[RMDB]
RNA sequence: GGGAACGACUCGAGUAGAGUCGAAAAGAAUAAAUCCCUCCCUCCCAAACGCGCGCAAAUAAAGGGAGGUCAACAGGGAUGAGUAGGCCUUUUGGCCAUAACCCUAAAGCGCGCGACGGCGCAAGAACCAUAUUACGACUUUCGAGUCGUAAUAUGGAAAAGAAACAACAACAACAAC
Reactivity to DMS in 0.01 (KOAc 150mM, MgCl2 10mM, bicine 150mM(pH8.5), 24C), signal-to-noise 4, nucleotides 027 to 126: g030a190a110u010a090a120a070u010c000c000c000u010c150c000c010u000c010c000c020a120a140a110c010g000c010g000c000g000c010a040a090a100u040a060a080a090g000g000g010a030g020g000u030c140a030a050c190a020g020g000g000a050u000g000a170g000u020a150g010g020c000c000u000u000u010u040g010g040c000c000a050u020a070a100c010c000c000u010a080a120a100g000c000g030c010g000c020g010a090c090g000g020c060g000c100a100a090g010a130a250
Reactivity to 2A3 in 0.01 (KOAc 150mM, MgCl2 10mM, bicine 150mM(pH8.5), 24C), signal-to-noise 9, nucleotides 027 to 126: g070a050a060u180a070a090a030u020c000c000c000u010c000c000c000u020c020c000c000a070a180a120c020g000c000g000c000g000c020a000a140a030u120a090a100a020g000g010g010a020g000g000u030c020a040a060c010a070g020g020g010a040u060g020a050g150u210a100g060g060c010c000u080u160u150u240g010g000c000c010a010u070a040a080c000c000c000u050a070a060a000g000c000g000c020g000c000g000a010c010g020g120c020g000c050a050a030g040a110a030

An RNA of 177 nucleotides, treated with DMS and 2A3 and read out base by base. The data come from the RNA Mapping Database (RMDB), library OK1LIB. For 2A3 the reverse transcriptase was SuperScript II with manganese. For DMS, 7,677 sequencing reads were counted. The reactions ran in a buffer of 150 mM KOAc, 10 mM MgCl2 and 150 mM bicine (pH 8.5), at 24 C.